[RMDB]
RNA sequence: GGGAACGACUCGAGUAGAGUCGAAAAGGUAGCGGCCGCUGGCGGCAAUGUGAAUGCGGCUGCCGUCGCCCUGGGCCUGACCACGCCCACCGGCGGCGAACGAUCUCCGAGCGUGGGCAGCGCCAGACCGUAGUGAGUCAUUCGUGACUCACUACGGAAAAGAAACAACAACAACAAC
Reactivity to 2A3 in 0.01 (KOAc 150mM, MgCl2 10mM, bicine 150mM(pH8.5), 24C), signal-to-noise 2, nucleotides 027 to 126: g010g010u050a000g000c010g010g020c020c010g050c070u060g080g020c020g050g060c210a110a170u280g050u110g170a240a060u120g020c000g000g000c010u010g010c020c000g030u010c030g020c000c000c010u040g060g000g020c000c010u010g020a030c020c010a030c040g000c000c000c000a060c000c040g030g020c020g000g000c040g010a060a020c050g080a240u000c020u000c020c020g030a020g010c020g000u040g010g000g040c030a050g000c050g000c040c010a020g070a040
Reactivity to DMS in 0.01 (KOAc 150mM, MgCl2 10mM, bicine 150mM(pH8.5), 24C), signal-to-noise 3, nucleotides 027 to 126: g010g000u000a060g020c000g030g000c000c030g020c010u000g010g030c040g000g000c160a110a100u010g000u000g010a120a070u000g030c000g020g010c000u000g010c020c020g000u000c010g000c030c030c040u000g000g020g000c020c030u000g000a060c040c030a060c110g010c010c020c020a180c190c100g000g020c060g030g010c060g000a010a050c160g020a120u000c030u000c020c030g020a110g010c010g030u000g000g020g000c010a040g000c110g000c010c030a090g030a170

This 177-nucleotide RNA was probed chemically with 2A3 and DMS. DMS (dimethyl sulfate) methylates the pairing face of unpaired adenines and cytosines. 2A3 adducts were read by reverse transcription with SuperScript II with manganese. The 2A3 profile rests on 2,502 reads. The reactions ran in a buffer of 150 mM KOAc, 10 mM MgCl2 and 150 mM bicine (pH 8.5), at 24 C. Values cover nucleotides 27 to 126. As a SHAPE reagent, 2A3 marks flexible, mostly unpaired nucleotides at the ribose 2'-OH. Source: RMDB library OK2TST, as collected in RNAgym.